[RMDB]
RNA sequence: GGGAACGACUCGAGUAGAGUCGAAAAUCGGGAGCAUUGGGUUUGGAGGAUUUUUAGUGAUUAAAGCGAGGUGCCGAUGCUUUCGGGGGUUUGAAAGCUUUCCAAACUAGAACGUACCCUCCAUGUAGUAUAUUAAAAAUUUCGAUUUUUAAUAUACAAAAGAAACAACAACAACAAC
Reactivity to DMS in 0.01 (KOAc 150mM, MgCl2 10mM, bicine 150mM(pH8.5), 24C), signal-to-noise 2, nucleotides 027 to 126: u050c060g020g000g010a030g000c030a040u000u000g000g000g010u020u000u000g000g010a040g000g010a060u010u050u020u010u000a060g020u030g000a080u030u030a050a030a080g010c070g000a120g020g020u010g010c020c010g020a040u000g020c000u010u010u000c030g000g020g010g000g000u010u040u020g000a030a090a090g010c070u000u000u000c070c040a060a040a050c060u020a030g000a070a050c150g000u020a090c100c010c000u000c010c000a020u020g000u020a200
Reactivity to 2A3 in 0.01 (KOAc 150mM, MgCl2 10mM, bicine 150mM(pH8.5), 24C), signal-to-noise 2, nucleotides 027 to 126: u120c010g000g000g000a020g000c040a020u040u100g060g000g030u130u120u060g010g020a000g040g020a100u040u000u000u050u210a110g010u070g110a080u120u250a190a050a030g040c040g050a080g080g020u100g020c000c000g040a030u010g010c000u040u030u000c010g010g000g000g000g010u020u050u130g150a080a040a010g030c000u090u030u000c050c000a050a000a020c010u030a040g030a120a010c020g030u030a060c020c000c000u040c000c010a000u070g000u010a010
Structure probing data (DMS and 2A3) for a 177-nucleotide construct. Conditions: 150 mM KOAc, 10 mM MgCl2 and 150 mM bicine (pH 8.5), 24 C. Reactivities are given for positions 27 through 126. For DMS, 3,263 sequencing reads were counted.